The data come from the RNA Mapping Database (RMDB), library OK3TST. This 207-nucleotide RNA was probed chemically with 2A3 and DMS. For DMS the reverse transcriptase was MarathonRT. The reactions ran in a buffer of 150 mM KOAc, 10 mM MgCl2 and 150 mM bicine (pH 8.5), at 24 C. For DMS, 4,433 sequencing reads were counted.
RNA sequence: GGGAACGACUCGAGUAGAGUCGAAAAGUUAGCUGUGACUGAAUACUCCUUUUUCAGUACGGUGUUUAUGAUUCAUGAAAAAUUAUAAGUGCCCCGGGGAUAAGAUAGUUGCACAGAAACCUCGAUGCAGGCUGGCGCAGGGCGCAAAGGCCUUAUCAUACAUAUAUCGAUUCGUCGAUAUAUGUAUAAAAGAAACAACAACAACAAC
Reactivity to 2A3 in 0.01 (KOAc 150mM, MgCl2 10mM, bicine 150mM(pH8.5), 24C), signal-to-noise 2, nucleotides 027 to 156: g030u050u090a020g000c030u010g040u040g050a070c000u010g030a020a070u050a120c080u090c020c000u090u090u030u070u060c080a050g020u090a070c030g010g010u020g010u010u040u020a030u010g010a010u000u070c130a100u160g160a130a060a020a030a020u070u070a050u010a080a000g010u030g030c000c000c010c040g040g000g000g000a020u030a090a020g020a020u060a050g040u070u110g020c060a030c010a050g100a060a060a030c010c020u040c080g040a020u060g050c030a010g020g000c010u010g010g000c040g010c080a110g060g160g060c020g000c020a050a060a040g010g000c000c000u010u030a040u040c030
Reactivity to DMS in 0.01 (KOAc 150mM, MgCl2 10mM, bicine 150mM(pH8.5), 24C), signal-to-noise 2, nucleotides 027 to 156: g010u000u010a120g020c080u000g010u010g020a090c000u010g020a150a090u020a070c120u010c030c020u010u000u000u000u000c030a080g060u000a070c060g000g040u000g020u000u000u010a010u000g010a040u010u000c060a140u020g000a110a140a060a030a040u010u000a000u000a020a070g000u000g000c030c010c020c070g030g020g000g030a120u000a070a060g000a120u010a060g010u000u000g000c020a080c070a080g000a110a060a060c000c010u000c000g030a110u000g050c040a050g050g010c030u000g000g040c090g050c080a110g020g030g030c030g000c070a080a100a140g000g000c020c000u010u000a060u000c040